[RMDB]
RNA sequence: GGGAACGACUCGAGUAGAGUCGAAAAGGGAGACCCGAGCAGAGGCAUAGCGAACUGCGCACGGCGAAGCCUUGAGGGAACGCCGUAGGACCCGGGUUCGAUUCCCGGCCGCUCCACCGAAGGGCCAACCCUGAUCAGUGUUCGCACUGAUCAGGGUAAAAGAAACAACAACAACAAC
Reactivity to DMS in 0.01 (KOAc 150mM, MgCl2 10mM, bicine 150mM(pH8.5), 24C), signal-to-noise 2, nucleotides 027 to 126: g000g000g020a090g030a040c000c010c010g000a110g010c100a110g000a120g010g020c080a160u020a150g010c010g010a120a040c050u000g000c030g020c080a030c000g000g000c020g020a220a110g000c010c020u010u060g010a130g040g000g000a050a170c030g000c010c010g040u000a120g020g000a100c140c060c010g030g010g000u010u040c070g000a220u020u000c000c020c010g000g000c050c020g000c090u010c060c040a160c140c060g000a180a070g010g000g000c010c080a090
Reactivity to 2A3 in 0.01 (KOAc 150mM, MgCl2 10mM, bicine 150mM(pH8.5), 24C), signal-to-noise 2, nucleotides 027 to 126: g070g000g000a060g030a020c000c000c000g000a050g000c020a000g000a080g070g020c100a140u080a080g070c030g050a080a030c030u030g000c030g020c040a020c000g000g000c000g030a140a110g040c000c000u160u220g150a160g010g020g060a070a020c010g010c000c000g000u030a130g030g040a020c060c030c000g000g000g000u010u010c020g020a090u050u020c000c000c000g010g020c010c000g060c010u020c010c010a080c030c000g020a030a030g010g000g020c030c000a010
Description
The data come from the RNA Mapping Database (RMDB), library OK1LIB. An RNA of 177 nucleotides, treated with DMS and 2A3 and read out base by base. For DMS the reverse transcriptase was MarathonRT. Reactivities are given for positions 27 through 126. Conditions: 150 mM KOAc, 10 mM MgCl2 and 150 mM bicine (pH 8.5), 24 C. The 2A3 profile rests on 1,403 reads. The DMS profile rests on 2,393 reads.